[RMDB]
RNA sequence: GGGAACGACUCGAGUAGAGUCGAAAAGGGAACUAUUCCUCUCGAGAAUCGGCAAAUGGGGCCCCUCGCUCGUAUCUCCGAGAGGAGACGAGAAAGAGGAGGAUCUCCCUUUGCCAUCCGAGGGAACUGACCGGUACGUUCGCGUACCGGAAAAGAAACAACAACAACAAC
Reactivity to 2A3 in 0.01 (KOAc 150mM, MgCl2 10mM, bicine 150mM(pH8.5), 24C), signal-to-noise 7, nucleotides 027 to 129: g040g010g020a090a020c040u050a080u070u020c030c030u150c000u010c010g300a300g040a250a080u160c130g000g000c000a010a020a040u130g010g000g010g000c010c000c000c000u010c000g010c000u000c000g040u090a150u030c010u000c000c010g050a050g010a040g100g000a000g000a000c000g000a000g000a040a230a030g020a000g010g030a140g040g010a050u040c060u080c020c000c000u000u000u000g000c000c000a000u000c010c000g000a000g000g000g000a000a000c020u010g040a060
Reactivity to DMS in 0.01 (KOAc 150mM, MgCl2 10mM, bicine 150mM(pH8.5), 24C), signal-to-noise 3, nucleotides 027 to 129: g040g000g000a140a030c110u030a190u040u040c040c040u070c010u000c000g090a230g030a050a020u030c130g020g010c000a030a010a010u000g000g000g000g000c000c000c000c000u000c060g000c000u010c000g000u050a130u030c000u040c010c010g030a160g020a200g010g020a020g000a040c000g010a010g040a060a080a090g010a110g000g000a160g050g000a110u060c040u000c010c000c020u000u000u000g000c010c000a050u000c010c010g010a010g030g010g000a010a030c190u030g020a170